Conditions: 150 mM KOAc, 10 mM MgCl2 and 150 mM bicine (pH 8.5), 24 C.
An RNA of 207 nucleotides, treated with DMS and 2A3 and read out base by base.
2A3 is a SHAPE reagent: it acylates the 2'-hydroxyl of flexible nucleotides of all four kinds.
2A3 adducts were read by reverse transcription with SuperScript II with manganese.
[RMDB]
RNA sequence: GGGAACGACUCGAGUAGAGUCGAAAAGGACUGCGCAGUCCGGCAACAUCAGCAGAGAGCCCGCUAUACGUGACGGAUUGGCUGAAGCGUACAGAAGUAUUGAGCCUCCUGCAAGAGGCAGCCAAGCAAAACGUACGUGAGUUCGCUCACGUACGAACAACCUACUAUACUUCGGUAUAGUAGGUUGAAAAGAAACAACAACAACAAC
Reactivity to DMS in 0.01 (KOAc 150mM, MgCl2 10mM, bicine 150mM(pH8.5), 24C), signal-to-noise 3, nucleotides 027 to 156: g020g010a060c020u010g000c090g020c070a110g000u010c000c010g000g020c040a080a080c030a070u010c070a110g000c020a140g010a130g000a130g000c000c020c030g000c040u000a100u010a080c020g050u000g000a270c030g020g020a200u010u000g010g000c020u030g010a040a300g000c070g020u000a080c030a060g000a060a060g030u000a300u000u000g000a190g000c040c010u000c000c010u020g010c160a060a070g020a080g020g010c010a050g010c010c000a030a080g000c070a030a030a110a190c010g020u000a010c030g000u000g020a030g040u010u000c300g010c020u000c000a000c000g010u020a000c000g000a030a110
Reactivity to 2A3 in 0.01 (KOAc 150mM, MgCl2 10mM, bicine 150mM(pH8.5), 24C), signal-to-noise 5, nucleotides 027 to 156: g040g000a020c030u070g040c170g050c100a020g020u000c000c000g020g020c020a050a040c010a100u120c030a010g000c030a020g080a000g010a010g100c000c050c040g000c030u080a090u030a100c090g030u070g060a020c040g070g050a110u050u040g040g000c010u030g020a090a010g030c010g000u020a040c030a050g120a160a040g080u090a120u140u190g020a020g010c000c000u020c020c040u080g070c040a100a040g010a010g050g000c000a000g000c000c030a030a000g010c050a020a060a060a050c010g000u000a000c000g000u010g000a000g000u030u160c200g030c120u000c000a000c000g000u000a000c000g020a020a000